Description:
This 177-nucleotide RNA was probed chemically with DMS and 2A3. For 2A3 the reverse transcriptase was SuperScript II with manganese. It was measured as part of the RMDB library M2PK90. For 2A3, 3,643 sequencing reads were counted. Reactivities are given for positions 27 through 126.

RNA sequence: GGGAACGACUCGAGUAGAGUCGAAAAUAAAAAGGGACGUGCAGCAGGCGAGGAACCCAAGCAGCUGUCCCGGGUGCCAUCGCCCUACGUGACGACACCAGGCGUGGAUAGCACCAGGCCUAAAAAAUCAUCAAAAGAAGUUCGCUUCUUUUGAUGAAAAAGAAACAACAACAACAAC
Reactivity to DMS in 0.01 (KOAc 150mM, MgCl2 10mM, bicine 150mM(pH8.5), 24C), signal-to-noise 3, nucleotides 027 to 126: u010a030a070a070a120a100g000g000g000a030c020g000u010g010c040a090g010c160a080g000g000c030g000a130g010g000a120a030c020c000c010a080a130g010c030a100g010c040u010g000u000c010c020c020g020g000g010u000g000c020c020a060u000c010g010c000c020c020u020a070c170g000u000g000a080c160g010a140c030a050c020c060a030g000g000c090g020u000g000g000a030u010a070g000c040a030c010c010a040g000g000c010c010u020a000a020a060a100a060a060
Reactivity to 2A3 in 0.01 (KOAc 150mM, MgCl2 10mM, bicine 150mM(pH8.5), 24C), signal-to-noise 2, nucleotides 027 to 126: u080a010a050a010a010a030g010g010g010a010c050g060u060g010c010a060g010c010a010g040g020c020g050a080g080g050a050a060c000c000c030a020a010g040c020a020g040c070u120g020u040c000c020c000g000g000g000u020g010c040c030a080u020c010g000c020c010c030u010a050c030g030u030g130a110c170g040a050c050a010c040c040a020g000g000c050g040u020g050g030a050u050a020g010c010a010c010c000a000g070g050c000c000u080a110a070a010a000a000a020